[RMDB]
Record summary: Conditions: 150 mM KOAc, 10 mM MgCl2 and 150 mM bicine (pH 8.5), 24 C. This 177-nucleotide RNA was probed chemically with DMS and 2A3. For 2A3, 5,553 sequencing reads were counted.
RNA sequence: GGGAACGACUCGAGUAGAGUCGAAAAGAUCACACCACGCACGGUUGGUUCGCCUCGUCGAACGACUGCGGGACCAGCUAACUACUUCGACCUGACCCGCACGGUGGUGCGCGCGUCGAUCGUCGCCCCCACAGACAAACUUCGGUUUGUCUGUGGGAAAAGAAACAACAACAACAAC
Reactivity to DMS in 0.01 (KOAc 150mM, MgCl2 10mM, bicine 150mM(pH8.5), 24C), signal-to-noise 2, nucleotides 027 to 126: g000a020u000c010a150c030a130c150c020a060c110g020c070a040c190g000g000u000u040g000g000u010u000c020g000c020c220u010c140g000u110c040g000a050a060c020g030a080c030u000g050c000g000g000g000a170c050c010a000g060c120u000a160a050c120u000a120c040u030u030c020g000a150c180c000u030g000a170c020c000c040g000c010a020c240g000g000u000g030g000u000g000c000g010c300g000c070g040u000c180g080a040u000c000g030u000c040g000c080c000
Reactivity to 2A3 in 0.01 (KOAc 150mM, MgCl2 10mM, bicine 150mM(pH8.5), 24C), signal-to-noise 7, nucleotides 027 to 126: g010a010u040c010a020c020a030c070c000a050c030g020c000a050c040g090g060u050u080g170g030u010u000c000g030c010c110u150c090g170u090c020g030a040a060c030g040a020c020u020g010c020g000g020g080a140c200c020a010g020c020u100a050a110c030u140a050c040u150u130c060g090a120c010c000u040g030a060c000c000c000g040c020a010c050g140g070u180g070g010u020g000c030g000c010g010c030g040u040c050g010a030u020c010g020u010c050g120c000c010